This 207-nucleotide RNA was probed chemically with 2A3. For 2A3, 553 sequencing reads were counted. 2A3 adducts were read by reverse transcription with SuperScript II with manganese.
RNA sequence: GGGAACGACUCGAGUAGAGUCGAAAACGGCAUAUCUGUUACACGACAACGCAGGUGUCCUAAGGCGAGCUCAGUGGGAUCUCACGUAGAACACAAGCGUAAAAGCUUGCUUGAUUAACGAUUUCCAGUACGAAUCGAGACUGCGAAAGCAAGGCCAGUUACCCUAACCCUUCGGGGUUAGGGUAACAAAAGAAACAACAACAACAAC
Reactivity to 2A3 in 0.01 (KOAc 150mM, MgCl2 10mM, bicine 150mM(pH8.5), 24C), signal-to-noise 1, nucleotides 027 to 156: c010g000g070c030a130u060a140u210c050u020g000u050u110a030c090a040c100g210a080c030a170a010c110g010c000a000g040g000u000g000u080c020c010u110a140a020g000g000c000g060a020g080c020u020c080a040g000u070g010g000g110a030u040c000u030c000a030c040g040u090a070g060a080a000c030a000c000a000a000g060c040g040u040a040a040a040a040g000c020u000u000g000c010u020u120g030a010u040u070a080a070c050g210a250u010u070u050c010c010a010g000u120a110c030g010a040a080u060c060g000a040g040a060c020u050g000c000g060a000a000a000g000c080a080a060g140g000c000c010a000